Description
An RNA of 177 nucleotides, treated with 2A3 and DMS and read out base by base. The reactions ran in a buffer of 150 mM KOAc, 10 mM MgCl2 and 150 mM bicine (pH 8.5), at 24 C. Reactivities are rounded to 0.1 and cut off at 0 and 3. The 2A3 profile rests on 33,678 reads. The DMS profile rests on 21,970 reads.
[RMDB]
RNA sequence: GGGAACGACUCGAGUAGAGUCGAAAAGUCCAUUAUCAGUUCACAGCUGGUGUCCCUGGUUCUGGUAAAUCCCGGUCAAUCCAACAAGGUGAUGUGGACGUAAUAGUGGUGCCAACUCGUGAGCUACGUACGAUAAAAAUUUCGAUUUUUAUCGUACAAAAGAAACAACAACAACAAC
Reactivity to 2A3 in 0.01 (KOAc 150mM, MgCl2 10mM, bicine 150mM(pH8.5), 24C), signal-to-noise 9, nucleotides 027 to 126: g030u010c010c000a020u170u180a120u180c090a000g010u020u020c020a020c000a040g000c020u030g040g010u020g050u100c010c000c000u030g050g020u080u040c030u050g020g010u060a130a160a100u060c010c010c000g000g020u060c050a050a090u030c050c020a030a070c050a180a170g080g090u140g070a090u060g070u080g100g020a010c010g020u030a050a060u080a170g090u100g030g010u020g000c000c000a020a020c020u030c100g020u020g020a010g000c010u020a020c080
Reactivity to DMS in 0.01 (KOAc 150mM, MgCl2 10mM, bicine 150mM(pH8.5), 24C), signal-to-noise 9, nucleotides 027 to 126: g010u010c010c010a120u010u000a070u010c100a040g010u000u000c020a030c030a040g020c030u000g010g020u000g010u000c020c030c020u000g010g020u000u000c030u000g010g010u010a070a110a100u000c040c000c020g010g010u000c110a080a110u010c100c090a080a090c170a100a100g020g020u010g010a050u000g010u000g000g000a030c020g010u010a070a080u010a040g020u000g020g000u000g000c010c020a030a030c030u000c160g010u000g010a050g010c030u000a080c210